Overview
Structure probing data (2A3 and DMS) for a 207-nucleotide construct. The 2A3 profile rests on 828 reads. The data come from the RNA Mapping Database (RMDB), library OK3TST. Conditions: 150 mM KOAc, 10 mM MgCl2 and 150 mM bicine (pH 8.5), 24 C.
RNA sequence: GGGAACGACUCGAGUAGAGUCGAAAAUCUGCAGAUGGCCUGAGAAAGGUUUGAAUAUUAUGGUUAAAACAUUCAAGAAGAAAGCUUUCUAGAAACGCAGCUGCUAUUUCAGUGCAUGUUCAGUUAGCAUUUUCUGACUGAUAAAAUAGAAUUGAGACGUAAUGGUUGCAUUCGUGCAACCAUUACGAAAAGAAACAACAACAACAAC
Reactivity to 2A3 in 0.01 (KOAc 150mM, MgCl2 10mM, bicine 150mM(pH8.5), 24C), signal-to-noise 2, nucleotides 027 to 156: u050c000u030g040c030a020g020a160u070g100g000c030c020u050g000a060g040a060a120a010g040g000u050u110u120g050a030a030u100a080u250u170a120u170g070g000u090u200a080a030a050a040c010a010u070u060c020a060a040g000a020a020g010a020a120a040g020c000u020u030u050c020u050a080g050a110a120a040c030g020c020a090g050c010u000g000c040u120a130u120u190u180c020a020g010u030g060c040a050u220g030u020u010c000a000g000u000u020a010g020c100a150u030u030u090u070c000u020g020a030c000u010g010a030u060a020a070a000a020u060a010g080a010a100u070u190g030a120g000a030
Reactivity to DMS in 0.01 (KOAc 150mM, MgCl2 10mM, bicine 150mM(pH8.5), 24C), signal-to-noise 1, nucleotides 027 to 156: u020c050u000g010c000a170g000a130u040g010g010c040c030u000g000a260g000a070a150a060g010g030u000u000u000g020a090a090u000a080u000u010a150u010g010g010u010u000a070a120a030a140c030a040u000u000c080a040a170g000a190a120g000a070a040a130g000c000u000u000u020c010u010a100g010a050a090a070c070g000c080a090g020c010u000g040c060u000a100u000u000u010c030a100g020u020g010c010a050u010g000u000u000c020a050g010u000u000a010g020c070a110u000u000u000u000c050u010g010a100c030u010g000a080u000a060a020a070a170u000a100g000a040a120u010u000g010a160g010a230